[RMDB]
RNA sequence: GGGAACGACUCGAGUAGAGUCGAAAAGAUAUGGAGCACGACCGACAUGCUUUCUCGUCGGAAACGACGAGAGAGCAACAGCGGUUCGUGCUCCUAAGUCAAACUUAGCAACUUCGGUUGCUAAGAAGGUACCAAUCUUGUUCGCAAGAUUGGUACCAAAAGAAACAACAACAACAAC
Reactivity to DMS in 0.01 (KOAc 150mM, MgCl2 10mM, bicine 150mM(pH8.5), 24C), signal-to-noise 2, nucleotides 027 to 126: g020a040u010a230u010g000g010a010g030c000a000c000g000a030c000c010g000a060c130a250u010g000c000u010u000u000c000u000c000g040u000c000g030g000a030a050a080c000g000a030c000g000a030g000a000g010a000g000c000a010a040c250a120g010c020g010g000u000u000c020g020u000g000c000u000c000c000u000a000a090g000u000c010a240a170a300c010u000u000a000g000c000a000a010c000u000u030c220g030g000u000u000g000c010u000a000a000g010a040a080
Reactivity to 2A3 in 0.01 (KOAc 150mM, MgCl2 10mM, bicine 150mM(pH8.5), 24C), signal-to-noise 1, nucleotides 027 to 126: g000a000u020a010u090g010g010a020g020c000a000c000g020a010c000c000g100a190c080a190u300g000c000u030u010u000c000u010c000g040u010c000g000g060a040a030a010c010g000a000c010g010a020g000a010g000a000g000c010a090a000c030a040g020c000g000g020u060u080c010g000u010g010c000u000c000c000u010a000a000g010u000c000a010a030a030c010u010u000a000g010c000a000a030c000u070u050c260g180g030u030u000g000c000u010a000a000g010a010a020
The record gives the reactivity of an RNA of 177 nucleotides to DMS and 2A3.
For 2A3 the reverse transcriptase was SuperScript II with manganese.
It was measured as part of the RMDB library TTRDES.